[RMDB]
RNA sequence: GGGAACGACUCGAGUAGAGUCGAAAAGAAAGAAUUUUGCAUCCUUGCCUGCUGCUCUCGGCAGGACUUGUAGAUUGUGUGCAUUGAUUUCUGUGCAUAAAACAAGCUAAGAAAUAAGUGAUCAAUAAACGGAGCUCCUUUUUGAGUUCAAAUGUAACAGCUAUGAUACUUUCGAGUAUCAUAGCUGAAAAGAAACAACAACAACAAC
Reactivity to DMS in 0.01 (KOAc 150mM, MgCl2 10mM, bicine 150mM(pH8.5), 24C), signal-to-noise 2, nucleotides 027 to 156: g010a090a120a190g030a120a110u010u000u000u000g000c090a120u000c010c010u000u000g000c020c030u000g000c010u010g020c090u000c110u000c060g040g030c020a080g030g020a070c060u000u000g020u010a070g000a160u000u000g020u000g000u020g000c040a080u010u010g020a170u000u000u000c100u020g000u030g010c040a040u000a040a020a100a070c040a070a060g020c080u000a070a100g010a100a080a030u000a040a100g000u010g010a120u000c060a060a120u010a040a060a060c080g010g000a070g020c000u020c000c120u000u000u010u000u030g010a060g030u000u000c040a050a040a020u010g000u000a080a200
Reactivity to 2A3 in 0.01 (KOAc 150mM, MgCl2 10mM, bicine 150mM(pH8.5), 24C), signal-to-noise 4, nucleotides 027 to 156: g110a010a120a020g120a080a100u150u110u090u130g040c030a040u020c010c020u040u050g020c000c000u000g000c000u020g020c000u020c040u060c080g010g000c000a000g000g020a010c000u000u020g020u010a070g040a230u040u090g010u000g000u010g020c020a010u020u110g110a110u150u230u120c050u030g010u000g000c000a000u050a060a090a010a020c030a010a020g020c040u150a090a020g060a070a090a050u150a090a020g030u060g100a030u140c040a030a060u100a200a080a040c060g020g010a020g000c000u040c030c000u060u300u080u220u300g020a000g010u030u040c020a030a110a070u200g050u140a060a040
Notes: The data come from the RNA Mapping Database (RMDB), library OK3TST. Structure probing data (DMS and 2A3) for a 207-nucleotide construct. For DMS, 3,324 sequencing reads were counted. Reactivities are given for positions 27 through 156. Conditions: 150 mM KOAc, 10 mM MgCl2 and 150 mM bicine (pH 8.5), 24 C. For 2A3 the reverse transcriptase was SuperScript II with manganese. For 2A3, 2,000 sequencing reads were counted.